Notes
Structure probing data (2A3 and DMS) for a 177-nucleotide construct.
[RMDB]
RNA sequence: GGGAACGACUCGAGUAGAGUCGAAAAGAUAUGGACGCAGGAGGACGCAACAGCGUAGUUCGGAAACGAACUACGACAUGCGUACCUCUGCGUCCUAAGUCAAAAUCAGAUCACUUCGGUGAUCUGACGAAUAGGCAUUGUUCGCAAUGCCUAUUCGAAAAGAAACAACAACAACAAC
Reactivity to 2A3 in 0.01 (KOAc 150mM, MgCl2 10mM, bicine 150mM(pH8.5), 24C), signal-to-noise 6, nucleotides 027 to 126: g020a010u080a040u150g010g000a010c010g000c030a050g120g300a060g030g010a060c000g010c020a040a150c050a260g090c010g020u000a010g000u010u010c010g020g010a060a080a040c020g000a000a000c000u000a000c000g030a020c000a040u060g000c010g010u110a210c000c000u000c000u000g010c000g000u000c000c010u000a010a000g010u010c010a000a010a000a270u050c000a000g000a010u010c010a000c030u050u160c300g140g000u010g000a000u000c000u000g010a030
Reactivity to DMS in 0.01 (KOAc 150mM, MgCl2 10mM, bicine 150mM(pH8.5), 24C), signal-to-noise 7, nucleotides 027 to 126: g010a040u010a300u010g000g010a010c000g020c000a030g020g010a060g020g000a050c000g010c000a030a110c300a240g000c010g000u000a000g010u000u000c000g010g000a120a120a260c000g020a010a010c000u000a000c000g010a020c120a160u000g010c000g020u000a090c000c000u000c000u000g010c000g000u000c000c000u000a010a060g010u000c020a070a060a110a210u000c000a000g000a020u000c000a000c000u000u020c240g020g020u000g010a000u000c000u000g000a020
The 2A3 profile rests on 22,552 reads. For DMS, 9,710 sequencing reads were counted. For DMS the reverse transcriptase was MarathonRT. It was measured as part of the RMDB library TTRDES.